This 207-nucleotide RNA was probed chemically with 2A3 and DMS. Values cover nucleotides 27 to 156.
[RMDB]
RNA sequence: GGGAACGACUCGAGUAGAGUCGAAAAGACGGAUGAACCCGACAUGGACGGGGAUGAAUCAGGCAUCGGAUAUGAGGAUUACAUCGCCGAGAUUAUUCAGGGGCACAGCGACGAGAAAAUCACGCUGAAAACCGCCCGCCAUCGCAUCGCCGGCGCGCAGGAUAUUAUUCUUCGGAAUAAUAUCCUGAAAAGAAACAACAACAACAAC
Reactivity to 2A3 in 0.01 (KOAc 150mM, MgCl2 10mM, bicine 150mM(pH8.5), 24C), signal-to-noise 3, nucleotides 027 to 156: g040a000c070g010g030a050u070g030a070a040c030c000c000g020a030c040a100u120g020g040a030c000g000g000g000g010a030u040g050a020a040u070c070a040g040g010c020a080u010c040g000g040a010u010a050u130g070a060g090g070a040u080u110a090c020a060u060c040g000c010c020g010a010g000a040u040u070a040u050u120c000a020g020g010g000g000c080a020c000a020g020c000g080a270c060g000a080g090a060a210a030a050u050c020a010c040g000c000u020g050a080a030a000a030c010c050g030c010c010c000g030c020c020a050u030c030g010c080a030u030c040g050c060c010g040g000c050g020c010g000
Reactivity to DMS in 0.01 (KOAc 150mM, MgCl2 10mM, bicine 150mM(pH8.5), 24C), signal-to-noise 2, nucleotides 027 to 156: g010a060c030g040g020a130u000g020a150a050c000c030c030g000a100c090a110u010g010g020a110c060g020g000g060g000a050u010g000a070a050u000c070a090g000g030c010a090u000c020g040g010a100u000a050u010g000a140g010g010a190u000u020a070c110a090u010c040g020c010c010g000a140g000a210u000u000a100u000u000c070a160g010g000g000g050c040a210c020a050g020c010g020a090c060g000a060g010a150a040a070a110u000c030a070c090g000c000u010g000a050a060a090a030c030c100g000c000c000c020g050c060c040a060u000c080g030c090a080u000c040g050c050c000g000g000c020g020c100g000